[RMDB]
RNA sequence: GGGAACGACUCGAGUAGAGUCGAAAAUCUGUCUAAUGCCUGAACAAUAGGAAAUGAGUUCUUUGACAGUUAAAGCCAGAGGACAAACUUAACUUUUAAGCAGCCACUGAGGAUUGAAGUGGAAGUACAGCUUGUAGACAGCUAUACAAAUCACUAAACGUGCUGAUUUAUUCGUAAAUCAGCACGUAAAAGAAACAACAACAACAAC
Reactivity to DMS in 0.01 (KOAc 150mM, MgCl2 10mM, bicine 150mM(pH8.5), 24C), signal-to-noise 2, nucleotides 027 to 156: u000c070u010g050u020c010u000a040a080u000g010c000c020u000g010a060a180c140a060a230u000a040g060g000a090a070a060u000g000a300g040u000u000c020u000u000u000g020a030c020a210g010u000u000a130a060a240g020c000c000a020g000a000g060g000a010c020a070a150a150c050u010u010a090a150c090u000u000u000u000a000a080g000c030a090g050c070c010a020c060u000g000a100g020g000a170u000u000g010a090a090g040u000g020g020a060a170g030u010a060c060a020g000c010u000u000g070u020a110g010a130c200a040g020c040u000a050u000a040c030a050a070a110u000c020a050c040u010a090a070
Reactivity to 2A3 in 0.01 (KOAc 150mM, MgCl2 10mM, bicine 150mM(pH8.5), 24C), signal-to-noise 3, nucleotides 027 to 156: u030c000u000g020u000c010u020a090a010u110g040c020c010u000g060a060a050c030a090a150u140a100g000g050a070a050a090u160g020a050g030u030u010c000u000u010u020g030a040c020a060g040u110u210a140a060a000g010c050c000a000g000a000g020g020a000c010a080a050a010c110u060u050a040a030c010u060u110u030u110a070a040g060c010a000g020c050c010a050c030u040g020a050g180g060a200u090u080g060a100a000g020u020g000g030a010a010g000u020a030c000a020g010c010u020u020g040u040a010g000a080c020a020g010c020u060a020u040a110c040a050a090a040u100c060a040c070u160a170a090
Source: RMDB library OK3TST, as collected in RNAgym. This 207-nucleotide RNA was probed chemically with DMS and 2A3. For 2A3, 1,595 sequencing reads were counted. For 2A3 the reverse transcriptase was SuperScript II with manganese. Values cover nucleotides 27 to 156. The reactions ran in a buffer of 150 mM KOAc, 10 mM MgCl2 and 150 mM bicine (pH 8.5), at 24 C. DMS adducts were read by reverse transcription with MarathonRT. The DMS profile rests on 2,207 reads.